[RMDB]
RNA sequence: GGGAACGACUCGAGUAGAGUCGAAAAGAGCAUCUGUCCAAACCUACACAAUGAAAGGCCGCACACAGUACGGGAGUAGACAUGCAAUUCUUGUUGAUUAGACAAGUUAGACAGCAAAUUCCUGGUCGUCUUAGCACGAGUUCGCUCGUGCUAAGACAAAAGAAACAACAACAACAAC
Reactivity to DMS in 0.01 (KOAc 150mM, MgCl2 10mM, bicine 150mM(pH8.5), 24C), signal-to-noise 1, nucleotides 027 to 126: g060a160g000c030a050u000c070u000g020u010c000c040a040a100a150c080c020u000a090c050a110c070a100a040u010g000a160a170a110g010g000c040c050g030c030a050c110a040c110a110g000u010a020c090g040g040g030a100g020u000a040g020a020c050a080u010g020c050a120a110u000u000c000u000u000g020u020u000g000a180u030u010a120g020a020c000a000a020g030u000u000a110g000a050c050a030g030c070a030a040a130u000u000c000c000u000g020g030u020c080
Reactivity to 2A3 in 0.01 (KOAc 150mM, MgCl2 10mM, bicine 150mM(pH8.5), 24C), signal-to-noise 1, nucleotides 027 to 126: g100a040g000c040a070u070c130u120g030u010c030c000a040a050a070c030c000u020a000c050a010c010a080a240u140g070a110a000a000g080g000c040c010g000c020a020c000a000c000a020g000u090a010c080g030g050g000a020g020u050a010g010a050c020a010u040g000c000a030a080u090u010c000u000u000g000u010u030g190a300u110u170a040g020a000c000a000a000g000u040u080a110g040a080c030a020g090c030a080a030a070u080u030c020c000u050g020g000u020c010